[RMDB]
RNA sequence: GGGAACGACUCGAGUAGAGUCGAAAACCUCAAGAGUUCGCUCUUGAGGAAAAUACCGCCCGAAAAGCUUGCUGACCGGGCGGAAAUAUAAAACAGCAAGCAAAACGGAAAGGUUCGCCUUUCCGAACCAUGUUACAAUCUUCGGAUUGUAACAUGGAAAAGAAACAACAACAACAAC
Reactivity to 2A3 in 0.01 (KOAc 150mM, MgCl2 10mM, bicine 150mM(pH8.5), 24C), signal-to-noise 2, nucleotides 027 to 126: c000c000u000c000a000a010g010a000g010u050u110c130g050c100u000c000u000u000g000a000g000g000a110a020a000a010u040a020c000c000g000c010c000c000g020a050a040a010a050g000c000u010u010g000c000u030g060a060c000c040g000g000g000c030g000g000a000a020a000u050a000u000a010a060a010a030c050a010g000c000a000a000g000c030a040a010a020a030c000g000g020a000a000a000g040g020u080u100c200g140c000c000u000u000u000c000c000g000a010a010
Reactivity to DMS in 0.01 (KOAc 150mM, MgCl2 10mM, bicine 150mM(pH8.5), 24C), signal-to-noise 2, nucleotides 027 to 126: c000c000u000c000a030a000g020a020g000u000u010c230g000c000u000c000u000u010g000a050g000g020a020a050a050a060u010a080c000c010g030c000c000c020g020a090a080a140a170g010c000u010u000g020c010u000g010a280c190c010g000g010g000c000g000g000a010a010a070u000a070u010a040a070a070a070c090a090g010c000a040a010g020c030a110a030a130a270c020g000g000a010a010a000g020g000u000u010c180g020c010c000u000u000u000c000c000g000a030a080
This 177-nucleotide RNA was probed chemically with 2A3 and DMS. For 2A3, 7,284 sequencing reads were counted. Source: RMDB library M2PK50, as collected in RNAgym. 2A3 adducts were read by reverse transcription with SuperScript II with manganese.